[RMDB]
This 177-nucleotide RNA was probed chemically with DMS. The reactions ran in a buffer of 150 mM KOAc, 10 mM MgCl2 and 150 mM bicine (pH 8.5), at 24 C. Reactivities are given for positions 27 through 126. For DMS the reverse transcriptase was MarathonRT.
RNA sequence: GGGAACGACUCGAGUAGAGUCGAAAACGUGUCGAGCACGCCGUUACGAAAGCCAAUCAGGCGGCGGGAGGGGGCUUCCUGCUGCGGAAUAAUCAGCUUCAGGGUAUCCACCACGGAGGCCACCUUCUGUCGUUGUGUUCUUCGGAACACAACGACAAAAAGAAACAACAACAACAAC
Reactivity to DMS in 0.01 (KOAc 150mM, MgCl2 10mM, bicine 150mM(pH8.5), 24C), signal-to-noise 1, nucleotides 027 to 126: c110g020u010g010u000c100g000a110g030c050a050c060g000c080c020g010u000u010a120c080g010a010a100a100g000c130c070a100a090u030c090a210g010g030c010g000g010c000g010g010g000a010g010g000g000g000g050c010u000u000c000c000u010g010c080u000g050c080g030g020a100a090u010a100a080u000c100a130g010c080u000u000c180a140g010g000g030u010a100u000c080c050a060c030c050a060c230g000g000a020g020g000c010c000a010c000c020u000u010c010